[RMDB]
RNA sequence: GGGAACGACUCGAGUAGAGUCGAAAAAGCAUACCAGCUCGUACGCGAGCUGGUAUGCAAAAAUUGGUGUAGCCUUACCGUAGUAGGCACAAAAACGUCAGCUGGAUCUACGGAUCCAGUUGACGAAAAAAGUGUUUUGUGUUCGCACAAAACACAACAUUCAUUAGUUCUUCGGAACUAAUGAAUGAAAAGAAACAACAACAACAAC
Reactivity to DMS in 0.01 (KOAc 150mM, MgCl2 10mM, bicine 150mM(pH8.5), 24C), signal-to-noise 2, nucleotides 027 to 156: a150g010c000a010u000a000c000c010a010g040c000u000c010g090u000a080c300g040c050g040a060g020c000u000g020g000u000a010u000g010c010a000a020a010a090a110u020u020g000g000u000g020u020a080g020c030c020u000u000a100c000c090g050u000a030g020u010a000g010g050c000a110c080a060a090a050a120a090c010g010u000c000a020g020c000u000g000g000a020u000c000u000a160c300g050g010a010u000c000c000a010g000u000u000g000a010c000g000a010a000a050a080a080a030g010u010g020u000u000u000u000g000u000g030u000u010c240g000c040a050c000a010a000a000a010c000a010c020a080a040
Reactivity to 2A3 in 0.01 (KOAc 150mM, MgCl2 10mM, bicine 150mM(pH8.5), 24C), signal-to-noise 1, nucleotides 027 to 156: a000g020c000a000u000a000c000c000a050g010c010u000c000g050u040a070c300g000c000g090a000g010c000u000g010g020u000a000u010g010c000a000a020a000a000a000u030u130g000g010u050g100u200a010g010c000c010u000u000a000c010c030g030u000a000g020u000a000g000g000c020a000c030a050a040a040a030a000c010g000u000c000a000g000c010u000g000g000a000u000c000u000a100c300g070g000a000u000c000c000a000g000u000u010g000a000c000g000a000a000a000a000a000a000g000u000g000u000u000u000u000g000u000g040u040u060c130g050c080a010c000a000a000a000a000c000a000c000a000a000